[RMDB]
RNA sequence: GGGAACGACUCGAGUAGAGUCGAAAAGAUAUGGACACAUGAGUUCCAUACACGCGAGAGCAACAGCUACAGGGUCGGAAACGACCCGUAGACAUGCUCUCGUAUGGAACUCAUGUGUCCUAAGUCACUAUAAGGUUUACUUCGGUAAACCUUAUAGAAAAGAAACAACAACAACAAC
Reactivity to DMS in 0.01 (KOAc 150mM, MgCl2 10mM, bicine 150mM(pH8.5), 24C), signal-to-noise 5, nucleotides 027 to 126: g010a040u010a300u000g010g000a010c000a000c010a010u000g000a030g020u000u000c000c000a010u000a040c070a190c300g050c290g010a020g010a020g010c010a050a060c300a190g000c000u000a010c000a160g060g000g010u000c000g000g010a100a090a280c010g020a010c000c010c010g000u000a000g010a040c110a160u010g010c010u000c000u000c000g010u000a000u010g000g000a030a000c000u000c000a000u000g010u000g000u000c000c000u000a010a060g000u010c050a280

Record summary: Chemical mapping of a 177-nucleotide RNA with DMS. The DMS profile rests on 5,267 reads. The reactions ran in a buffer of 150 mM KOAc, 10 mM MgCl2 and 150 mM bicine (pH 8.5), at 24 C. DMS adducts were read by reverse transcription with MarathonRT.